[RMDB]
RNA sequence: GGGAACGACUCGAGUAGAGUCGAAAAGCACAAAGAUCAUCGCCGAGCUCGACGACCUGAACAAACAGCUGAGCUUCACCGUCAAGGAGCGUCCAGCCAGCUCUGGUGAGGGCCUGGAGCUGCGGCCUAGUGUUCGUACUUUCGAGUACGAACACUAAAAAGAAACAACAACAACAAC
Reactivity to 2A3 in 0.01 (KOAc 150mM, MgCl2 10mM, bicine 150mM(pH8.5), 24C), signal-to-noise 2, nucleotides 027 to 126: g080c040a020c060a100a130a040g120a100u140c070a050u160c080g000c000c000g060a000g000c010u000c030g130a110c050g030a040c090c010u040g030a040a000c020a050a070a010c030a040g030c020u030g020a020g000c000u070u050c050a060c040c020g150u150c080a110a130g080g000a100g070c050g010u020c080c060a000g030c000c010a010g000c000u030c060u170g090g040u060g020a010g000g000g000c000c030u090g060g000a000g000c010u160g130c000g010g000c010c000
Reactivity to DMS in 0.01 (KOAc 150mM, MgCl2 10mM, bicine 150mM(pH8.5), 24C), signal-to-noise 3, nucleotides 027 to 126: g000c080a040c110a090a150a060g000a090u040c160a100u000c100g010c020c010g010a100g000c020u000c020g010a180c180g000a070c060c010u000g010a180a020c050a040a040a110c200a060g000c000u000g010a130g010c000u010u000c060a110c120c030g000u010c210a090a200g000g000a050g000c070g000u010c060c060a010g000c030c030a040g010c020u020c060u010g000g000u000g010a280g020g000g000c050c000u030g000g000a040g020c010u000g040c000g000g010c050c100